This 177-nucleotide RNA was probed chemically with DMS and 2A3.
The data come from the RNA Mapping Database (RMDB), library OK2TST.
For 2A3 the reverse transcriptase was SuperScript II with manganese.
The reactions ran in a buffer of 150 mM KOAc, 10 mM MgCl2 and 150 mM bicine (pH 8.5), at 24 C.
[RMDB]
RNA sequence: GGGAACGACUCGAGUAGAGUCGAAAACAGUGCGCAGCGACCUGGCCAGCGCCUUCGGUGACUGGGAAUCGAUCCGCGAGCAGGUGCACGAGCUGGCGGUCCGCGCUCCGGAACGCAUUGACACCGAAGGUACUACGGAAUUCGUUCCGUAGUACCUAAAAGAAACAACAACAACAAC
Reactivity to DMS in 0.01 (KOAc 150mM, MgCl2 10mM, bicine 150mM(pH8.5), 24C), signal-to-noise 6, nucleotides 027 to 126: c060a030g010u000g010c030g030c080a130g000c060g010a070c060c030u020g020g020c030c020a080g000c020g010c130c050u010u000c060g000g020u000g000a130c080u000g020g010g010a120a100u010c040g000a120u010c020c030g020c110g010a050g010c050a130g010g000u020g000c080a100c100g010a100g000c050u000g010g010c040g000g010u000c030c040g000c120g010c060u000c050c020g000g010a040a090c030g000c070a060u000u000g010a110c080a190c020c020g010a120
Reactivity to 2A3 in 0.01 (KOAc 150mM, MgCl2 10mM, bicine 150mM(pH8.5), 24C), signal-to-noise 5, nucleotides 027 to 126: c010a020g040u020g050c010g000c040a080g040c020g040a050c030c010u070g120g050c010c000a040g000c020g040c050c030u080u080c050g050g030u040g060a160c030u080g030g010g150a050a110u100c030g030a070u020c030c050g050c070g050a010g020c030a020g000g070u090g030c060a030c110g010a040g030c070u070g050g020c010g000g030u050c050c040g020c000g000c020u010c000c010g030g030a050a030c020g000c040a030u000u090g040a050c030a040c040c020g040a030